[RMDB]
RNA sequence: GGGAACGACUCGAGUAGAGUCGAAAAACAGAGGCUGUAGUGGUUGUAGUCGAUGUAGCGCUACUUGCCUCAGCAGUAGUCGACAUAACAACAGCAGCAGCUGCUGCUGCUCCAGCUGCUACAGUAAUACGUGAUCAGUAUUCGUACUGAUCACGUAAAAAGAAACAACAACAACAAC
Reactivity to 2A3 in 0.01 (KOAc 150mM, MgCl2 10mM, bicine 150mM(pH8.5), 24C), signal-to-noise 4, nucleotides 027 to 126: a000c070a040g100a090g210g000c010u010g010u000a000g010u010g040g010u020u020g010u040a050g020u030c070g040a030u060g030u070a040g060c030g000c050u020a020c000u040u190g010c020c050u120c060a020g000c000a010g010u050a010g010u040c040g040a040c040a060u100a170a040c070a060a020c010a040g010c000a000g000c000a030g090c090u280g000c010u000g000c000u010g010c000u020c020c000a000g000c000u010g000c010u000a000c010a000g020u040a030a050
Reactivity to DMS in 0.01 (KOAc 150mM, MgCl2 10mM, bicine 150mM(pH8.5), 24C), signal-to-noise 7, nucleotides 027 to 126: a120c090a130g010a110g000g020c000u000g010u000a010g020u000g010g010u000u000g010u000a080g000u010c120g010a060u010g010u010a080g020c180g010c010u000a010c020u010u010g030c010c200u010c230a110g020c010a040g000u000a040g010u000c010g010a030c020a050u000a110a080c080a070a170c030a020g020c010a010g010c010a250g020c230u010g010c020u000g000c000u000g000c020u000c080c010a020g000c010u000g010c000u000a010c010a010g010u000a060a110